[RMDB]
RNA sequence: GGGAACGACUCGAGUAGAGUCGAAAAAUAGCUUGUUCGCAAGCUAUCGUAAGUCCUAAGUCUUAACGUUGAUCUUGGGACAACAGCUAUCGGAAACGAUAGACAUGUCCCUGGGGAGUUAAGAUAUGGAGAGUAGGUCGGGGUUCGCCCCGACCAAAGAUGCAAUCCUAUUCGUAGGAUUGCAUCUAAAAGAAACAACAACAACAAC
Reactivity to 2A3 in 0.01 (KOAc 150mM, MgCl2 10mM, bicine 150mM(pH8.5), 24C), signal-to-noise 2, nucleotides 027 to 156: a000u010a000g000c010u010u020g020u110u090c300g010c120a000a000g000c000u000a010u050c070g130u120a070a110g110u010c010c020u040a140a060g010u000c000u000u010a020a020c050g180u160u020g010a010u010c000u010u000g000g010g030a010c000a040a020c080a030g050c010u000a000u010c010g040g050a130a040a050c010g000a000u000a010g040a040c010a050u030g000u000c000c000c000u020g000g000g000g000a040g000u010u010a000a000g010a010u030a040u040g030g000a100g020a030g120u190a080g010g000u000c000g000g000g010g000u040u090c220g110c020c000c000c000g000a000c000c000a000a000
Reactivity to DMS in 0.01 (KOAc 150mM, MgCl2 10mM, bicine 150mM(pH8.5), 24C), signal-to-noise 2, nucleotides 027 to 156: a000u000a000g010c000u000u000g020u020u000c300g040c000a000a010g020c000u010a020u000c030g030u000a080a120g020u010c000c020u000a080a300g020u020c020u000u010a020a030c030g010u000u000g020a050u010c000u000u000g000g020g010a040c000a020a040c100a210g020c000u000a020u010c000g000g000a210a150a300c000g000a040u010a010g000a070c070a300u000g000u000c000c010c000u000g000g000g000g000a070g020u000u000a020a020g010a040u000a180u000g040g000a100g010a180g010u000a110g020g010u000c010g000g000g000g000u010u000c090g000c000c000c000c010g030a000c000c000a010a020

Conditions: 150 mM KOAc, 10 mM MgCl2 and 150 mM bicine (pH 8.5), 24 C. Chemical mapping of a 207-nucleotide RNA with 2A3 and DMS. 2A3 adducts were read by reverse transcription with SuperScript II with manganese. Source: RMDB library RNAMAK, as collected in RNAgym.